[RMDB]
RNA sequence: GGGAACGACUCGAGUAGAGUCGAAAAGAUAUGGACGCGUAUCCAGCUUUGAUCUAUGAUCGGAAACGAUCAUAGGGAGCUGAGUACGGCGUCCUAAGUCAAAGGCUCAUGGUUCGCCAUGAGCCAACGUUAACCCAACGUUCGCGUUGGGUUAACGAAAAGAAACAACAACAACAAC
Reactivity to DMS in 0.01 (KOAc 150mM, MgCl2 10mM, bicine 150mM(pH8.5), 24C), signal-to-noise 1, nucleotides 027 to 126: g010a030u020a300u000g000g010a010c000g020c010g010u000a000u000c030c000a020g040c010u000u000u010g000a060u040c000u000a000u010g000a010u000c000g010g000a160a080a250c020g010a000u000c000a000u000a000g000g000g010a000g020c000u000g000a020g000u000a010c010g010g030c010g000u010c000c000u000a010a110g000u000c050a190a090a220g020g000c000u010c000a020u000g000g000u000u000c300g040c000c000a000u000g000a040g000c000c000a000a030
Reactivity to 2A3 in 0.01 (KOAc 150mM, MgCl2 10mM, bicine 150mM(pH8.5), 24C), signal-to-noise 1, nucleotides 027 to 126: g000a060u030a020u120g000g000a010c000g000c030g020u060a020u170c090c000a010g000c000u300u300u040g040a000u000c010u020a000u000g010a010u010c000g010g000a010a000a010c000g000a000u000c000a000u010a000g000g010g000a010g010c010u010g030a040g110u000a050c180g130g000c020g030u000c000c000u020a020a000g040u000c070a170a090a030g020g020c010u000c020a010u040g000g040u070u110c300g110c120c010a020u040g000a010g000c030c010a010a000
Description: Structure probing data (DMS and 2A3) for a 177-nucleotide construct. The reactions ran in a buffer of 150 mM KOAc, 10 mM MgCl2 and 150 mM bicine (pH 8.5), at 24 C. It was measured as part of the RMDB library TTRDES. High DMS reactivity at an A or C suggests that its Watson-Crick edge is free.